RNA sequence: GGGAACGACUCGAGUAGAGUCGAAAAGCUCGUCCACUCCGAUCGAUCCACUAGGAGCUAUCGGAACUCUUAGCGGAGUGACCAAAUCUCUCGACUUCAGUUGGACAUCGUGAGAUCGAGGUCCAAAGACGAUUGAUGCCUUCGGGUAUCGAUCGUCAAAAGAAACAACAACAACAAC
Reactivity to 2A3 in 0.01 (KOAc 150mM, MgCl2 10mM, bicine 150mM(pH8.5), 24C), signal-to-noise 9, nucleotides 027 to 126: g020c010u010c020g040u020c020c010a020c010u000c000c000g020a040u050c030g030a050u010c010c010a030c050u040a070g010g000a010g010c010u070a080u110c040g040g020a030a020c000u000c000u030u040a010g020c020g030g020a020g010u050g020a030c000c010a020a040a040u020c020u000c000u010c020g050a050c030u070u040c070a120g030u080u080g040g010a010c000a030u000c000g010u030g060a050g000a020u060c020g030a030g000g020u000c000c010a020a030a010
Reactivity to DMS in 0.01 (KOAc 150mM, MgCl2 10mM, bicine 150mM(pH8.5), 24C), signal-to-noise 8, nucleotides 027 to 126: g000c030u000c060g000u010c070c070a070c050u010c030c010g000a070u020c080g010a070u010c010c020a210c100u010a050g000g000a010g010c050u010a070u030c140g010g020a220a120c030u010c000u010u010a060g010c090g000g000a040g000u010g000a070c040c040a070a090a040u010c010u000c010u000c010g000a070c200u010u000c080a140g010u000u010g010g010a050c220a090u000c000g010u000g000a060g000a050u020c040g020a130g000g000u000c010c050a030a050a090